[RMDB]
RNA sequence: GGGAACGACUCGAGUAGAGUCGAAAAGAAAAACAGGCAGCCAUUGCUCAGGAGAGUCUGGAGGCAAAUGUGCGCCAAUGGGCUGAGACCUACGUGCCAGGUUCUGCAGAUGUGCAGCGUCUGUGGCCUUUAUACUCACCUUCGGGUGAGUAUAAAGAAAAGAAACAACAACAACAAC
Reactivity to 2A3 in 0.01 (KOAc 150mM, MgCl2 10mM, bicine 150mM(pH8.5), 24C), signal-to-noise 3, nucleotides 027 to 126: g040a000a040a000a000a000c030a000g000g000c010a020g030c020c000a050u050u040g020c020u020c110a030g050g070a140g040a020g120u090c030u100g220g150a060g030g050c010a040a080a100u210g080u090g070c040g000c010c000a010a060u070g010g000g010c060u110g070a030g050a190c020c020u040a060c050g080u070g020c010c000a010g010g050u040u050c000u050g060c000a030g010a230u110g070u080g170c040a050g060c020g010u020c020u040g040u040g030g000c000
Reactivity to DMS in 0.01 (KOAc 150mM, MgCl2 10mM, bicine 150mM(pH8.5), 24C), signal-to-noise 4, nucleotides 027 to 126: g000a060a060a050a120a060c080a060g010g010c010a110g020c020c020a050u000u000g010c040u010c080a060g000g000a130g000a100g010u010c030u000g000g010a190g010g010c020a040a080a070u010g010u010g010c080g030c020c010a080a110u010g010g010g020c020u000g000a120g020a100c020c010u010a060c160g000u000g000c030c030a030g010g010u000u000c010u010g000c020a050g000a060u000g000u000g010c080a070g010c100g020u000c000u000g010u010g000g000c100